[RMDB]
RNA sequence: GGGAACGACUCGAGUAGAGUCGAAAAGAUAUGGAAUUCCUUGUCAGAGACCCUGGAGCUCGUGGGUCGGAAACGACCCAUAGAGCUCCCUGGUCUCUUGGAUUUAGGAAUUCCUAAGUCAAACAUCAAUCAUAUGUUUCGACAUAUGAUUGAUGAAUCGUAUAACGAGUUUCGACUCGUUAUACGAAAAAGAAACAACAACAACAAC
Reactivity to 2A3 in 0.01 (KOAc 150mM, MgCl2 10mM, bicine 150mM(pH8.5), 24C), signal-to-noise 1, nucleotides 027 to 156: g010a000u030a030u110g000g010a000a000u000u000c000c000u030u000g000u000c000a000g000a000g000a010c000c010c020u000g000g010a000g000c000u000c010g000u000g010g010g000u000c050g000g030a200a060a010c010g000a000c000c100c000a020u040a000g000a000g010c050u010c000c010c010u000g000g000u010c000u000c000u000u060g000g000a010u220u080u150a000g000g010a000a000u000u000c000c000u000a040a000g050u000c030a040a020a090c000a000u000c000a010a000u000c000a010u000a000u000g020u040u080u100c180g110a000c000a000u000a000u000g020a000u000u000g000a000u000g000a000a050
The data come from the RNA Mapping Database (RMDB), library RNAMAK. The record gives the reactivity of an RNA of 207 nucleotides to 2A3. For 2A3, 1,782 sequencing reads were counted.